[RMDB]
RNA sequence: GGGAACGACUCGAGUAGAGUCGAAAACGCCACUUCACCGGCACGGGCGCCUGCUACGUCGAGACCGGUGAUCACCAGGCAGCCAAGGGCGACGGCGAUUUCUUCGCUCCGUCGGCGCCCUCGGUGACCUCCGAUAAUCCUUCGGGAUUAUCGGAGGAAAAGAAACAACAACAACAAC
Reactivity to DMS in 0.01 (KOAc 150mM, MgCl2 10mM, bicine 150mM(pH8.5), 24C), signal-to-noise 1, nucleotides 027 to 126: c160g000c000c000a290c180u010u000c000a000c000c000g000g000c000a230c040g020g010g020c000g000c100c020u040g000c030u010a250c060g010u000c000g000a150g010a180c000c000g020g060u000g000a000u000c100a020c100c040a120g000g030c030a300g000c050c060a000a010g000g040g020c000g030a020c000g010g000c000g030a120u000u080u000c030u000u060c100g000c120u010c040c040g010u070c000g050g050c000g010c000c000c010u000c020g000g010u000g000a090
Reactivity to 2A3 in 0.01 (KOAc 150mM, MgCl2 10mM, bicine 150mM(pH8.5), 24C), signal-to-noise 3, nucleotides 027 to 126: c060g020c000c000a040c030u050u010c010a020c000c000g030g000c060a010c100g070g000g000c000g020c040c070u150g070c030u130a050c020g020u020c020g040a040g020a300c000c000g000g000u010g000a010u000c010a020c030c010a060g080g000c020a010g030c010c000a000a010g000g000g010c000g000a010c000g010g020c020g040a040u050u170u110c100u130u140c110g030c090u040c070c000g000u000c000g000g020c000g000c000c010c000u010c020g000g020u010g030a040

The data come from the RNA Mapping Database (RMDB), library OK1LIB. The record gives the reactivity of an RNA of 177 nucleotides to DMS and 2A3. Reactivities are given for positions 27 through 126. High 2A3 reactivity points to a flexible backbone, as in loops and unpaired stretches. For 2A3, 3,104 sequencing reads were counted. DMS adducts were read by reverse transcription with MarathonRT. The RNA was probed in 150 mM KOAc, 10 mM MgCl2 and 150 mM bicine (pH 8.5) at 24 C. The DMS profile rests on 1,460 reads.